Chemical mapping of a 207-nucleotide RNA with 2A3 and DMS. Conditions: 150 mM KOAc, 10 mM MgCl2 and 150 mM bicine (pH 8.5), 24 C. It was measured as part of the RMDB library OK3TST. The 2A3 profile rests on 5,497 reads.
RNA sequence: GGGAACGACUCGAGUAGAGUCGAAAAGAGAUGAUGCUGAUAAAGCGUUCAUUCAGCUCCAACGCAACACCGACCCCGAGUUCCCACAAAGCGUCAUCCACCGGGUGACGACCGAUGGGACAGGCGUGAUCGAUGAUGAACGAGUCGCUGCUGUCGGAAACUGAUAGGAUUUCGAUCCUAUCAGUUUAAAAGAAACAACAACAACAAC
Reactivity to 2A3 in 0.01 (KOAc 150mM, MgCl2 10mM, bicine 150mM(pH8.5), 24C), signal-to-noise 6, nucleotides 027 to 156: g080a000g000a020u060g000a020u030g010c000u020g020a140u260a150a110a020g020c040g030u030u050c040a080u070u040c030a020g030c020u060c060c020a090a090c050g020c060a040a100c020a050c050c010g020a030c000c000c000c010g030a050g070u140u030c010c020c000a010c030a020a050a000g030c010g010u000c000a000u000c000c020a140c140c190g010g000g010u000g000a000c000g020a030c000c020g130a170u030g020g000g000a010c010a030g010g000c040g020u060g030a150u030c020g020a030u060g030a050u100g020a070a020c030g000a020g040u040c010g000c050u120g010c020u010g090u080c040g060g000
Reactivity to DMS in 0.01 (KOAc 150mM, MgCl2 10mM, bicine 150mM(pH8.5), 24C), signal-to-noise 4, nucleotides 027 to 156: g010a190g020a070u010g030a040u000g020c000u010g020a170u000a100a120a050g030c000g030u000u000c060a130u000u000c000a090g020c020u010c030c050a100a130c090g020c030a110a170c000a050c030c010g000a100c010c010c020c030g010a160g030u010u000c000c000c010a030c040a100a140a160g020c010g000u000c000a060u010c000c000a250c130c140g000g010g020u000g000a030c050g000a020c010c040g010a170u010g010g000g000a060c090a120g040g000c070g020u010g000a040u000c020g020a080u010g000a160u000g000a090a120c060g010a110g000u000c020g020c020u010g010c000u000g020u000c020g000g000